[RMDB]
RNA sequence: GGGAACGACUCGAGUAGAGUCGAAAAGGAGCGCACUCUCCUUAAACGGCGUACGUUUUAAAUUAGACGACAACGAUAAUUUUGCAAUGGCAGCCUAAGGGCAGCCCGUCUUGCCUGAGAGUACCACGGCUUGGGUAAAGGCGUCGACUAGUGGUGAGAAUCUGCAUUUCUUCGGAAAUGCAGAUUCAAAAGAAACAACAACAACAAC
Reactivity to 2A3 in 0.01 (KOAc 150mM, MgCl2 10mM, bicine 150mM(pH8.5), 24C), signal-to-noise 3, nucleotides 027 to 156: g000g010a010g000c030g030c060a030c020u040c000u020c000c000u000u040a070a060a000c020g050g010c020g000u090a050c040g010u060u010u020u170a120a220a140u070u070a040g020a060c040g070a050c040a070a010c040g070a090u060a130a150u100u140u110u240g050c030a050a100u050g000g000c010a020g000c010c010u080a100a100g050g010g000c010a010g000c010c020c000g010u020c020u030u050g010c000c000u000g010a000g000a000g070u050a060c000c000a010c000g030g000c000u000u010g020g000g000u060a120a120a020g000g000c020g020u060c010g040a020c060u170a080g010u010g020g000u010g010a080

An RNA of 207 nucleotides, treated with 2A3 and read out base by base. The RNA was probed in 150 mM KOAc, 10 mM MgCl2 and 150 mM bicine (pH 8.5) at 24 C.